[RMDB]
RNA sequence: GGGAACGACUCGAGUAGAGUCGAAAAGGAAGCAAUGAAUCUCUGUCCUCCUUGGUCCUGGGUUUAUGCGUGCAUUUCCAAAGGGAGAUGCAUGCAUAAUCUGUCCGGUGAACCCGCCAGGCCCGGAAGGGAGCAACGGUGGCUGGAACCAAGGAUGCCUAGAUGCUCUGUUCGCAGAGCAUCUAGGAAAAGAAACAACAACAACAAC
Reactivity to 2A3 in 0.01 (KOAc 150mM, MgCl2 10mM, bicine 150mM(pH8.5), 24C), signal-to-noise 1, nucleotides 027 to 156: g070g030a060a020g040c100a040a110u200g050a100a110u080c050u030c010u050g100u060c050c000u000c010c000u000u000g000g000u000c020c070u110g010g000g010u030u040u020a000u000g000c010g000u000g020c000a000u000u000u000c040c020a290a280a160g300g010g000a030g000a000u000g010c000a000u010g000c000a000u000a000a000u000c000u000g080u010c010c010g050g000u010g050a080a050c020c020c000g000c000c000a000g000g040c000c000c000g000g120a090a080g010g010g000a020g060c020a000a000c030g040g000u020g090g000c010u030g000g010a000a000c000c000a000a000g000g010a000u040g010